The data come from the RNA Mapping Database (RMDB), library TTRINS. Structure probing data (DMS and 2A3) for a 177-nucleotide construct. Values are in units of 0.01, from 0 to 300, in steps of 10.
RNA sequence: GGGAACGACUCGAGUAGAGUCGAAAAGAUAUGGAUGAUGAUCAGGCGUCCUAUUAGCUAAGACAGUCGCUCGGAAACGAGCGAUCGAGCUAAUAGGACGAACUACCUGGUUUGUCAUCCUAAGUCAUCAUUUUAUUUCGUUCGCGAAAUAAAAUGAAAAAGAAACAACAACAACAAC
Reactivity to DMS in 0.01 (KOAc 150mM, MgCl2 10mM, bicine 150mM(pH8.5), 24C), signal-to-noise 3, nucleotides 027 to 126: g000a080u010a300u010g000g000a000u000g000a020u000g010a010u000c000a000g000g000c040g000u010c000c010u000a010u010u010a000g010c010u020a220a180g030a140c300a070g000u000c000g020c000u000c000g000g010a140a070a120c000g020a000g000c000g010a010u000c020g000a000g000c000u000a010a010u000a020g010g000a010c010g000a010a030c080u020a300c000c000u000g000g020u000u000u020g070u000c000a010u000c000c010u020a030a080g000u000c030a200
Reactivity to 2A3 in 0.01 (KOAc 150mM, MgCl2 10mM, bicine 150mM(pH8.5), 24C), signal-to-noise 1, nucleotides 027 to 126: g040a040u110a040u190g000g000a000u030g020a000u020g020a020u030c010a010g050g010c050g000u000c000c020u000a000u000u000a000g030c000u190a300a070g080a130c050a060g050u000c020g000c020u000c020g020g020a110a070a030c020g000a000g000c010g000a010u020c010g000a000g000c000u000a000a000u030a010g000g020a000c000g000a000a000c000u000a020c000c000u020g070g000u040u120u270g040u030c000a000u000c010c000u000a110a030g060u030c020a080